Description:
Chemical mapping of a 207-nucleotide RNA with 2A3. For 2A3, 336 sequencing reads were counted. For 2A3 the reverse transcriptase was SuperScript II with manganese. Source: RMDB library OK3TST, as collected in RNAgym. Conditions: 150 mM KOAc, 10 mM MgCl2 and 150 mM bicine (pH 8.5), 24 C.
RNA sequence: GGGAACGACUCGAGUAGAGUCGAAAAGCGCAGCAUUACGAUGCUGCGCAACCACUAUGUGAUCUUAUUAAAAUUAGGUUAAAUUUCGAGGUUAAAAAUAGUUUUAAUAUUGCUAUAGUCUACCCUCGUGCAACGCGCAUGCUACGGCAUGCGCGAAAAUUACGUUUUACUUCGGUAAAACGUAAUUAAAAGAAACAACAACAACAAC
Reactivity to 2A3 in 0.01 (KOAc 150mM, MgCl2 10mM, bicine 150mM(pH8.5), 24C), signal-to-noise 1, nucleotides 027 to 156: g000c000g040c000a010g000c010a060u060u080a010c270g040a000u000g000c000u000g000c010g000c000a000a000c000c000a000c090u190a150u180g050u010g070a010u040c010u190u110a120u110u130a180a130a170a030u120u060a040g020g000u060u040a070a160a180u300u300u070c000g010a000g000g000u000u070a000a170a000a000a000u000a010g000u000u000u000u300a260a160u300a220u300u080g010c000u010a040u010a050g060u000c090u120a030c060c000c000u000c000g030u010g000c000a140a040c060g000c000g000c000a000u010g000c000u020a090c220g010g040c000a000u000g110c000g000c000g000a010a000